[RMDB]
RNA sequence: GGGAACGACUCGAGUAGAGUCGAAAACUACCACCUGUGUACAUUCAUUGGCAAGUCACCAUCCUAUCCUCUUGCUGCAUCUUGCCUUUCCACUGCGAUUAUUUUUAGGGGUGUGUGUGCACCGCGCUGGGAAUAUGGCAAACGUCCCCACUCCCCACAACAGUCCUAGUUUCGACUAGGACUGUUGAAAAGAAACAACAACAACAAC
Reactivity to DMS in 0.01 (KOAc 150mM, MgCl2 10mM, bicine 150mM(pH8.5), 24C), signal-to-noise 1, nucleotides 027 to 156: c020u000a300c010c000a160c050c000u010g040u020g000u020a030c050a080u000u000c050a120u020u010g000g000c010a070a090g020u020c060a050c010c030a080u000c010c020u000a100u010c000c000u000c030u000u000g010c040u000g000c050a110u000c070u000u000g020c030c030u010u010u010c000c010a110c010u000g000c040g030a140u010u020a220u010u010u010u000u020a140g060g020g030g070u000g000u000g000u000g010u010g040c040a070c010c010g020c040g010c060u030g000g000g040a040a100u000a080u010g050g010c030a040a040a090c080g030u000c020c000c010c030a080c080u000c020c000c000c000a300
Reactivity to 2A3 in 0.01 (KOAc 150mM, MgCl2 10mM, bicine 150mM(pH8.5), 24C), signal-to-noise 5, nucleotides 027 to 156: c050u070a070c010c010a030c000c040u050g020u020g020u150a040c020a100u040u140c020a040u070u100g050g000c050a050a020g050u060c050a010c070c000a060u140c020c020u090a100u100c030c020u050c040u060u060g040c030u030g020c020a070u020c040u040u030g010c010c000u010u040u000c070c020a190c090u060g020c030g080a090u090u090a130u130u300u090u100u190a100g040g010g030g010u020g010u000g010u010g060u110g020c030a010c000c030g040c000g000c030u040g000g010g050a030a040u140a090u170g040g000c000a100a100a040c040g050u020c000c000c000c010a020c020u010c000c000c000c010a030